Overview
Source: RMDB library TTRDEL, as collected in RNAgym. Chemical mapping of a 177-nucleotide RNA with DMS and 2A3. Values cover nucleotides 27 to 126. 2A3 adducts were read by reverse transcription with SuperScript II with manganese.
RNA sequence: GGGAACGACUCGAGUAGAGUCGAAAAGAUAUGGACACAUCCAAUAUCAUCUUUGAUCUCGGAAACGAGGGAGAUGUAUUGGAGUGUGUCCUAAGUCAAAACGCCAAACAGUUCGCUGUUUGGCGAACUAUAGAAUGCGCUUCGGCGCAUUCUAUAGAAAAGAAACAACAACAACAAC
Reactivity to DMS in 0.01 (KOAc 150mM, MgCl2 10mM, bicine 150mM(pH8.5), 24C), signal-to-noise 1, nucleotides 027 to 126: g000a050u000a300u010g000g010a000c000a000c000a030u000c000c000a000a010u000a000u020c000a000u000c000u010u010u020g000a060u000c000u000c020g010g010a160a120a130c010g000a000g000g000g000a010g000a000u000g040u030a030u000u000g000g010a020g020u010g020u000g000u000c000c000u000a020a090g000u010c040a050a050a080a120c030g000c010c010a020a000a020c040a000g010u000u000c250g040c020u000g010u000u020u000g000g010c030g000a000a030
Reactivity to 2A3 in 0.01 (KOAc 150mM, MgCl2 10mM, bicine 150mM(pH8.5), 24C), signal-to-noise 1, nucleotides 027 to 126: g020a010u100a030u160g020g000a000c000a000c000a010u000c000c000a020a010u030a060u220c060a010u010c000u230u300u140g140a100u040c000u000c000g030g000a080a120a070c020g000a010g000g060g000a020g030a000u000g000u060a020u020u000g010g020a070g060u010g000u010g030u010c000c000u000a060a020g050u010c010a050a000a060a130c010g000c010c000a000a010a010c000a000g040u140u150c260g000c160u000g000u000u000u000g000g050c010g010a000a000